The record gives the reactivity of an RNA of 177 nucleotides to DMS and 2A3.
For 2A3 the reverse transcriptase was SuperScript II with manganese.
The reactions ran in a buffer of 150 mM KOAc, 10 mM MgCl2 and 150 mM bicine (pH 8.5), at 24 C.
It was measured as part of the RMDB library OK1LIB.
RNA sequence: GGGAACGACUCGAGUAGAGUCGAAAAGGUGAUCUGGACGGGAAGUAGGUCCAGCGACUGCAUCCGAAGCUUUGAUAAGAGCAACUCCAUCUACGUUGCUCAAGUAGGUGGUAGCAGCAAACACCGAAGCGCAUUAUAUAUUCGUAUAUAAUGCGCUAAAAGAAACAACAACAACAAC
Reactivity to DMS in 0.01 (KOAc 150mM, MgCl2 10mM, bicine 150mM(pH8.5), 24C), signal-to-noise 9, nucleotides 027 to 126: g000g020u000g000a110u020c000u000g010g000a020c010g020g020g020a120a130g020u030a080g000g000u010c000c000a010g000c290g010a160c010u000g000c000a170u010c020c020g010a300a290g000c030u000u020u030g020a150u050a140a130g000a010g000c000a020a040c030u010c170c140a100u030c150u030a070c160g000u010u010g000c040u010c040a010a040g010u000a030g000g010u040g010g000u000a140g000c020a010g010c070a080a080a120c010a020c000c000g000a110
Reactivity to 2A3 in 0.01 (KOAc 150mM, MgCl2 10mM, bicine 150mM(pH8.5), 24C), signal-to-noise 9, nucleotides 027 to 126: g010g000u010g020a120u030c000u010g010g010a010c010g080g100g110a150a110g150u290a060g100g070u000c000c000a000g000c020g050a130c000u000g000c000a040u000c020c030g050a080a030g000c030u090u100u160g150a170u210a210a100g000a000g000c010a010a000c020u060c080c020a150u050c040u090a050c100g040u040u070g030c010u040c060a010a010g010u020a010g020g090u130g050g020u070a040g000c000a000g000c010a020a070a010c010a000c010c010g010a020